The data come from the RNA Mapping Database (RMDB), libraries RFM100 and RFMREP. Structure probing data (DMS and 2A3) for a 177-nucleotide construct. The reactions ran in a buffer of 150 mM KOAc, 10 mM MgCl2 and 150 mM bicine (pH 8.5), at 24 C. For DMS the reverse transcriptase was MarathonRT. In probing experiments dimethyl sulfate is read out at A N1 and C N3, which are open when not base-paired.
[RMDB]
RNA sequence: GGGAACGACUCGAGUAGAGUCGAAAAUUACUACAAUAUGGCUGCUCAGUGCUGUGUUGUCGUUCCCCCUGCUCAGAACAAUUGUUUCUUAACUAUACCUGUCUGCUGUCUACCUGUAGCAGCCAGGUAUUUUUGUGAAUUUCGAUUCACAAAAAUAAAAAGAAACAACAACAACAAC
Reactivity to DMS in 0.01 (KOAc 150mM, MgCl2 10mM, bicine 150mM(pH8.5), 24C), signal-to-noise 8, nucleotides 027 to 126: u020u020a110c130u010a060c070a040a050u010a040u010g000g010c010u000g010c070u010c090a100g010u010g010c020u010g020u000g010u010u000g000u000c010g000u000u000c010c010c000c060c040u010g010c060u010c090a070g000a080a070c140a110a170u010u000g000u000u000u000c000u000u000a080a150c200u010a080u010a030c010c000u000g010u010c000u000g000c000u000g010u020c080u010a120c160c140u000g010u000a010g000c000a000g010c030c000a010g000g010
Reactivity to 2A3 in 0.01 (KOAc 150mM, MgCl2 10mM, bicine 150mM(pH8.5), 24C), signal-to-noise 6, nucleotides 027 to 126: u130u070a050c040u020a020c030a050a030u060a060u100g030g000c010u060g040c030u090c110a080g090u070g100c020u010g000u010g010u060u050g020u010c010g000u010u020c000c000c000c000c020u040g020c020u040c060a040g040a080a050c050a130a120u030u020g000u000u000u000c010u030u030a060a060c040u070a030u040a150c000c000u000g010u010c000u000g000c000u000g050u090c030u080a170c050c060u090g010u030a000g000c000a000g000c010c000a000g000g000